[RMDB]
RNA sequence: GGGAACGACUCGAGUAGAGUCGAAAACAUAGCGUUUCACAAUGUGCGCCAUUAACAUUGUUUAUGCAAUCACGUUUCGCAAUGUACGGCGCAGAAACAUUGCCAACACAAAUACGCUUCACGAUGUAAAACAUCGGUGCGUUCGCGCACCGAUGAAGAGACUGAGAACGUUCGCGUUCUCAGUCUCAAAAGAAACAACAACAACAAC
Reactivity to 2A3 in 0.01 (KOAc 150mM, MgCl2 10mM, bicine 150mM(pH8.5), 24C), signal-to-noise 2, nucleotides 027 to 156: c070a020u130a000g000c000g030u050u150u130c070a010c030a030a010u050g030u020g050c010g000c000c000a070u120u100a070a020c000a000u000u000g050u060u080u110a180u070g010c100a070a060u100c070a070c160g000u040u130u110c020g000c000a000a030u010g000u010a010c020g000g010c010g000c000a000g040a000a070a000c010a010u030u100g030c000c010a150a000c050a020c020a120a160a000u140a070c030g000c000u060u020c060a070c110g100a090u180g090u300a000a080a100a000c000a000u000c000g000g050u020g000c000g000u000u070c180g000c000g000c050a000c000c040g000a000u020g000a000a010